An RNA of 177 nucleotides, treated with 2A3 and DMS and read out base by base. For 2A3, 8,850 sequencing reads were counted. For DMS, 8,225 sequencing reads were counted. 2A3 adducts were read by reverse transcription with SuperScript II with manganese. The RNA was probed in 150 mM KOAc, 10 mM MgCl2 and 150 mM bicine (pH 8.5) at 24 C. In probing experiments dimethyl sulfate is read out at A N1 and C N3, which are open when not base-paired. Values cover nucleotides 27 to 126.

[RMDB]
RNA sequence: GGGAACGACUCGAGUAGAGUCGAAAAAGCAAUGAGGAGCAGCUGUAAAUACAGAUGAAGCGUCACUCUCCGCCUACCGCUCACCUCCAGCUCUGCGGCCCAGUUCCUAACAGGCCACGGACUGAUACUUACAUAACCAGUUCGCUGGUUAUGUAAGAAAAGAAACAACAACAACAAC
Reactivity to 2A3 in 0.01 (KOAc 150mM, MgCl2 10mM, bicine 150mM(pH8.5), 24C), signal-to-noise 5, nucleotides 027 to 126: a010g080c070a060a070u140g010a040g030g040a030g010c030a020g000c020u020g030u100a150a200a120u240a130c030a020g090a090u080g090a130a030g020c020g090u070c020a070c060u040c000u010c010c020g010c000c010u050a080c040c020g010c040u030c020a060c010c010u050c030c000a010g020c060u000c010u050g010c010g010g010c010c000c000a020g030u050u020c030c010u040a070a050c030a030g000g000c000c020a010c030g000g000a010c000u010g000a010u040a120
Reactivity to DMS in 0.01 (KOAc 150mM, MgCl2 10mM, bicine 150mM(pH8.5), 24C), signal-to-noise 7, nucleotides 027 to 126: a090g010c080a090a050u000g010a110g010g000a090g020c080a080g000c020u000g010u010a080a080a110u010a080c070a030g010a060u010g000a110a110g020c060g020u000c080a090c080u000c030u000c040c040g000c050c020u000a090c090c060g000c040u000c060a110c060c040u000c040c020a040g000c120u000c030u000g020c060g010g010c010c000c050a130g000u000u000c050c040u000a070a080c140a150g000g000c010c000a050c040g000g000a050c040u000g010a150u000a110